[RMDB]
RNA sequence: GGGAACGACUCGAGUAGAGUCGAAAAGCCUUGUCCAGUGGUUUGGUAAGCAAUAUUUAUUGAUGAGAUUGCACUGACCAAAUGUUGCCUGUAUACUUGCCCUGAGUUACACCACUUGCCUGGCAUACGAGCACUAGUCUUUCGAGACUAGUGCUCGAAAAGAAACAACAACAACAAC
Reactivity to DMS in 0.01 (KOAc 150mM, MgCl2 10mM, bicine 150mM(pH8.5), 24C), signal-to-noise 1, nucleotides 027 to 126: g020c000c000u000u000g070u000c000c020a020g020u000g000g030u000u000u000g000g000u030a090a090g040c020a020a070u000a060u000u000u000a300u070u010g000a140u010g010a120g000a060u000u000g000c050a170c080u020g000a070c060c020a030a040a040u010g000u000u000g010c040c080u000g020u000a040u010a070c020u000u000g010c020c060c050u000g000a070g000u000u000a060c080a060c070c070a080c020u000u000g000c020c020u000g000g000c040a120u000a160
An RNA of 177 nucleotides, treated with DMS and read out base by base.